Notes
The record gives the reactivity of an RNA of 177 nucleotides to 2A3 and DMS. The DMS profile rests on 1,804 reads.

[RMDB]
RNA sequence: GGGAACGACUCGAGUAGAGUCGAAAACUACGCGAAGGCAAGCUGGUCACUGUGGGGGCAGAAGAUCUGGUGCCUGGAGAUAUAGUAGAAGUAUCGGUAGGGAACCGUGUUCCUGCGGACAUGCGAACGAUUUAGCUAGCUUCGGCUAGCUAAAUCGAAAAGAAACAACAACAACAAC
Reactivity to 2A3 in 0.01 (KOAc 150mM, MgCl2 10mM, bicine 150mM(pH8.5), 24C), signal-to-noise 1, nucleotides 027 to 126: c010u030a020c060g040c010g100a070a000g060g000c030a030a030g090c040u040g050g010u010c000a000c110u040g040u070g030g020g000g030g000c020a010g060a150a010g000a000u000c030u110g000g010u030g030c000c030u010g050g140a090g000a020u080a010u060a070g130u030a050g050a210a020g030u010a040u110c030g060g040u040a010g090g060g020a030a040c000c020g000u010g030u050u010c000c020u030g010c060g000g030a060c030a030u150g000c030g050a110a040
Reactivity to DMS in 0.01 (KOAc 150mM, MgCl2 10mM, bicine 150mM(pH8.5), 24C), signal-to-noise 2, nucleotides 027 to 126: c050u000a050c120g030c030g020a100a080g000g010c040a080a060g020c020u000g000g010u000c040a100c080u000g030u000g000g020g000g000g000c030a020g020a140a080g010a010u000c040u000g010g020u000g010c020c000u010g010g000a150g000a040u000a040u000a100g010u000a100g000a060a140g000u000a030u000c000g010g010u010a190g010g020g000a070a100c040c030g010u000g000u000u010c010c010u010g000c120g010g000a050c120a070u000g000c060g000a110a170